[RMDB]
RNA sequence: GGGAACGACUCGAGUAGAGUCGAAAAGGAUCACCAAUAAGCGUUUUGGUCGCGUGGGCGACUCGCCAAUCAUCGGCGCUGGAACGCUAGCUGAAAAUGGCAAUGUCGCCAUUUCAUGCACCGGAAAACGCCUACCAUAGUUCGCUAUGGUAGGCGUAAAAGAAACAACAACAACAAC
Reactivity to DMS in 0.01 (KOAc 150mM, MgCl2 10mM, bicine 150mM(pH8.5), 24C), signal-to-noise 2, nucleotides 027 to 126: g000g000a080u020c030a300c050c060a100a180u010a150a120g050c040g010u000u010u000u000g020g040u000c100g050c010g060u000g010g010g010c030g000a020c060u000c150g010c000c000a030a090u000c150a070u000c050g010g020c010g000c120u020g000g010a020a060c020g000c000u000a080g000c050u000g000a030a040a090a080u000g000g040c000a130a090u000g020u010c090g010c000c000a050u000u000u010c020a030u000g020c010a070c010c000g010g010a030a050a060
Reactivity to 2A3 in 0.01 (KOAc 150mM, MgCl2 10mM, bicine 150mM(pH8.5), 24C), signal-to-noise 2, nucleotides 027 to 126: g050g070a100u090c020a000c220c000a020a080u260a120a030g000c030g030u030u010u070u110g080g000u090c120g000c010g010u110g060g070g030c010g080a080c010u000c000g000c000c000a060a070u110c050a050u020c040g070g020c000g000c070u140g070g010a000a040c020g000c010u000a110g030c000u050g010a010a060a070a050u020g030g000c060a010a100u260g040u100c020g000c070c010a010u030u090u040c000a010u050g000c040a060c030c050g050g040a050a050a000